[RMDB]
RNA sequence: GGGAACGACUCGAGUAGAGUCGAAAAACUGAGUUGUUCGCAACUCAGUCUAGGAGGUCGGCGCCGGCCCCGGCCUUCCGCGCCCCCCACGGGAAGGAAGCAUAAAGUUCGUCUUCGGACGAACUAACAACAUAGAGCUCUUCGGAGCUCUAUGUUGAAAAGAAACAACAACAACAAC
Reactivity to DMS in 0.01 (KOAc 150mM, MgCl2 10mM, bicine 150mM(pH8.5), 24C), signal-to-noise 2, nucleotides 027 to 126: a000c000u000g010a020g010u000u010g030u000u030c200g020c000a020a000c010u000c000a000g000u000c040u010a130g020g010a010g010g030u000c000g020g000c070g030c040c020g000g000c030c060c010c020g000g010c000c000u010u000c030c040g010c200g020c040c010c000c010c030c020a130c080g010g030g000a040a040g000g000a110a070g010c120a090u000a070a090a070g010u000u000c000g010u000c000u000u020c150g010g010a010c000g010a010a000c000u010a020a110